[RMDB]
Structure probing data (2A3 and DMS) for a 177-nucleotide construct. It was measured as part of the RMDB library TTRDEL. 2A3 adducts were read by reverse transcription with SuperScript II with manganese. Reactivities are rounded to 0.1 and cut off at 0 and 3. For DMS, 6,950 sequencing reads were counted. The RNA was probed in 150 mM KOAc, 10 mM MgCl2 and 150 mM bicine (pH 8.5) at 24 C.

RNA sequence: GGGAACGACUCGAGUAGAGUCGAAAAGAUAUGGAGCUUUGUCAGCUAUGGUGACGAAUUCGGAAACGAACUAUCACACAUAGCUUGGAUUUAAGCUCCUAAGUCAAAAGCUACCUUCGGGUAGCAAUCACCAUAUGUACUUCGGUACAUAUGGUGAAAAAGAAACAACAACAACAAC
Reactivity to 2A3 in 0.01 (KOAc 150mM, MgCl2 10mM, bicine 150mM(pH8.5), 24C), signal-to-noise 2, nucleotides 027 to 126: g030a010u040a050u160g000g000a000g010c000u040u010u030g020u030c000a000g010c000u000a010u010g000g030u010g000a050c090g180a300a300u020u010c010g030g030a050a070a040c010g000a010a010c040u030a050u050c000a000c010a000c000a010u010a000g000c000u010u080g040g010a020u230u230u260a000a000g000c000u000c000c000u000a050a010g000u010c030a000a000a100a130g000c000u000a000c000c000u040u100c300g140g000g010u000a000g000c000a000a020
Reactivity to DMS in 0.01 (KOAc 150mM, MgCl2 10mM, bicine 150mM(pH8.5), 24C), signal-to-noise 5, nucleotides 027 to 126: g000a030u000a300u000g000g010a010g010c000u000u000u000g010u000c000a050g000c000u000a000u000g000g010u000g010a010c110g010a050a160u000u000c000g010g010a120a050a240c000g010a010a010c060u000a240u000c020a010c000a080c010a000u000a000g010c000u000u000g020g010a000u000u010u000a010a010g020c000u000c000c000u010a010a070g000u000c030a080a070a110a130g000c000u000a000c000c000u000u010c210g020g010g010u000a000g010c000a020a040